[RMDB]
RNA sequence: GGGAACGACUCGAGUAGAGUCGAAAAAGAGGUUUCGACCUCUCGCCUGCGUACUACCAGUACUUUUGACGGUGUCAAGAGGUAGUCCCAAAUAGGACUAUAAUCUCUUGAUACACCGAUAAGUACUGGUAUCGCUUUAUGCUGCUUUCGAGCAGAAGUACUCUCAGCUAUUCGUAGCUGAGAGUACAAAAGAAACAACAACAACAAC
Reactivity to 2A3 in 0.01 (KOAc 150mM, MgCl2 10mM, bicine 150mM(pH8.5), 24C), signal-to-noise 3, nucleotides 027 to 156: a000g000a000g000g000u050u140u210c150g110a070c020c000u020c020u020c020g060c030c000u030g000c000g040u050a110c040u020a000c010c010a010g030u020a000c010u070u140u070u120g120a050c030g020g000u000g000u000c000a010a000g020a000g040g000u000a000g000u020c000c000c030a230a300a090u300a140g000g000a010c000u000a000u050a150a300u100c000u020c000u000u000g020a030u030a050c030a070c000c010g010a020u040a020a000g000u000a000c000u050g000g000u000a000u000c000g000c000u010u060u000a200u180g000c000u010g000c000u080u030u220c270g170a000g000c020a020g040a090a010
Reactivity to DMS in 0.01 (KOAc 150mM, MgCl2 10mM, bicine 150mM(pH8.5), 24C), signal-to-noise 1, nucleotides 027 to 156: a010g000a020g020g040u000u020u020c200g010a120c010c010u010c020u010c030g020c030c000u010g020c020g020u000a130c070u020a020c000c000a030g030u000a000c000u000u000u000u020g000a300c090g000g000u000g060u000c010a000a020g010a020g070g040u000a000g000u000c000c000c030a100a140a250u000a050g000g020a050c000u010a020u010a130a140u010c000u000c000u000u010g000a030u000a060c040a050c020c000g020a220u000a000a010g020u000a000c000u000g030g000u000a000u000c000g020c010u010u000u000a060u030g050c010u000g010c020u000u010u020c090g000a150g000c000a090g000a060a300